Chemical mapping of a 207-nucleotide RNA with DMS. The RNA was probed in 150 mM KOAc, 10 mM MgCl2 and 150 mM bicine (pH 8.5) at 24 C. DMS adducts were read by reverse transcription with MarathonRT. For DMS, 2,287 sequencing reads were counted.
RNA sequence: GGGAACGACUCGAGUAGAGUCGAAAAACUACGAUCCGAUUAAUCGCACGUACUCCGGAACGUGGGACGGUGUUUUCAAGUGGGCGUGGAGCAAUAACCCGGCCUGGGUGCUUUAUGACCUAAUCAUGAAUCAGCGCUAUGGCUUAGACCAGCGUGAAACCCCCAAUAGAUUCGUCUAUUGGGGGUUAAAAGAAACAACAACAACAAC
Reactivity to DMS in 0.01 (KOAc 150mM, MgCl2 10mM, bicine 150mM(pH8.5), 24C), signal-to-noise 1, nucleotides 027 to 156: a080c010u000a030c000g000a010u020c000c000g060a200u000u000a080a020u010c060g000c000a040c090g040u000a130c060u000c060c000g000g050a110a080c050g030u000g000g010g010a160c060g000g000u010g010u000u010u000u010c080a070a210g010u000g010g010g030c040g000u000g000g030a100g020c010a090a120u000a080a160c020c000c020g000g020c180c070u020g010g050g020u000g000c000u010u000u000a100u000g000a060c000c050u000a070a160u000c050a150u000g030a080a090u010c040a300g010c000g000c010u000a050u000g030g020c000u000u010a120g020a100c010c010a050g020c020g030u010g020a050